Structure probing data (DMS and 2A3) for a 177-nucleotide construct. The data come from the RNA Mapping Database (RMDB), library OK2TRN. For DMS the reverse transcriptase was MarathonRT.

[RMDB]
RNA sequence: GGGAACGACUCGAGUAGAGUCGAAAAAAUCUUGCAGGAAAUGUUGUAGAACAACUCCAUAAUGAUUAUGUUAAGCAGAAGUUUUCUGUAGUAUAAAUGCGUGUGGCUGUUUUGGGAGCUACUGGACUCAUGGACAUCAAUUCGUUGAUGUCCAUGAAAAAGAAACAACAACAACAAC
Reactivity to DMS in 0.01 (KOAc 150mM, MgCl2 10mM, bicine 150mM(pH8.5), 24C), signal-to-noise 3, nucleotides 027 to 126: a080a050u010c010u000u010g020c050a060g010g010a050a050a060u000g000u000u010g000u010a070g000a070a150c060a020a090c130u010c050c040a100u000a090a070u010g000a120u010u000a090u000g020u000u010a100a150g010c030a050g010a060a150g010u000u010u000u000c010u010g010u000a050g010u010a050u010a040a080a060u010g010c090g010u000g000u010g010g010c050u000g010u000u010u000u010g010g010g010a060g000c040u000a050c030u000g000g000a210c210
Reactivity to 2A3 in 0.01 (KOAc 150mM, MgCl2 10mM, bicine 150mM(pH8.5), 24C), signal-to-noise 1, nucleotides 027 to 126: a010a010u090c040u050u100g000c040a010g020g060a070a090a120u040g000u130u040g000u130a040g060a150a030c010a010a040c050u000c030c000a090u130a300a060u100g060a000u000u200a100u220g010u050u010a060a040g000c000a000g010a230a120g120u140u030u060u000c000u040g030u010a060g130u070a100u040a200a130a040u180g040c120g030u060g000u000g070g020c020u000g100u110u190u050u180g060g000g030a030g000c030u060a040c000u050g070g000a010c020